[RMDB]
RNA sequence: GGGAACGACUCGAGUAGAGUCGAAAAAAGUGUCUGCUUCACCACGUUCUCUUAGCAAGGAUUGGAUGAACAAUGUGAUGUCUCUACCGGCUAUUGGAAUGUUUUUAAUUGCUGAGCCAAUGACGUACUGUGGUGGUAUGUUCGCAUACCACCACAGAAAAGAAACAACAACAACAAC
Reactivity to DMS in 0.01 (KOAc 150mM, MgCl2 10mM, bicine 150mM(pH8.5), 24C), signal-to-noise 2, nucleotides 027 to 126: a040a080g000u010g000u000c010u000g020c070u010u000c020a100c050c080a140c050g020u000u000c020u000c040u000u000a070g020c060a080a100g010g000a140u010u000g010g010a040u010g000a050a060c060a100a210u000g010u030g030a090u000g000u000c000u030c030u000a080c050c030g010g000c030u000a040u020u010g000g000a020a050u010g010u000u000u000u000u000a060a140u000u010g000c030u000g000a110g030c050c160a040a050u000g000a070c070g000u010a210
Reactivity to 2A3 in 0.01 (KOAc 150mM, MgCl2 10mM, bicine 150mM(pH8.5), 24C), signal-to-noise 1, nucleotides 027 to 126: a000a000g110u080g000u020c020u000g070c060u050u090c020a050c050c010a050c110g030u030u010c030u000c000u040u050a020g000c040a120a240g010g020a130u120u070g080g030a030u040g050a040a100c000a020a060u170g040u120g110a050u050g070u100c000u000c010u080a090c010c010g070g000c000u030a020u050u080g050g000a080a040u020g050u040u000u020u040u100a070a030u040u080g020c030u040g060a030g000c020c010a040a030u050g010a030c040g030u090a050
Chemical mapping of a 177-nucleotide RNA with DMS and 2A3. For 2A3 the reverse transcriptase was SuperScript II with manganese. The RNA was probed in 150 mM KOAc, 10 mM MgCl2 and 150 mM bicine (pH 8.5) at 24 C.